[RMDB]
RNA sequence: GGGAACGACUCGAGUAGAGUCGAAAACCCGCCCGAGGCGCUUCGUCACUCGGGCGGGUGAACAUCACCGGUUGAGCUGGAUUUCGGGGCCCUCAACUCCCCUACUCUCAGCGCAAACAAACACAUCACAGUAUCUAAGUUUCGACUUAGAUACUGUAAAAGAAACAACAACAACAAC
Reactivity to DMS in 0.01 (KOAc 150mM, MgCl2 10mM, bicine 150mM(pH8.5), 24C), signal-to-noise 7, nucleotides 027 to 126: c000c000c010g020c000c010c010g010a020g000g010c120g020c130u050u040c210g010u020c030a070c020u000c000g020g010g030c000g010g020g000u000g000a050a070c220a100u020c080a090c050c030g000g010u010u000g000a110g000c020u010g000g000a060u000u000u020c160g010g010g000g020c260c060c070u040c190a110a140c200u010c010c000c010c010u000a090c150u000c020u010c000a010g020c000g000c100a080a040a050c090a070a060a080c200a090c200a100u030c120
Reactivity to 2A3 in 0.01 (KOAc 150mM, MgCl2 10mM, bicine 150mM(pH8.5), 24C), signal-to-noise 9, nucleotides 027 to 126: c000c000c000g000c010c000c000g030a030g130g070c070g020c160u290u280c160g210u240c040a030c060u000c000g000g000g000c000g000g000g000u000g000a000a020c040a050u100c050a040c080c010g060g010u030u040g030a020g000c010u010g010g010a040u030u060u080c040g010g000g000g000c000c030c040u200c040a030a080c030u060c010c000c000c000u010a020c010u020c010u010c020a010g010c010g010c050a020a040a030c030a010a090a010c080a010c010a090u150c030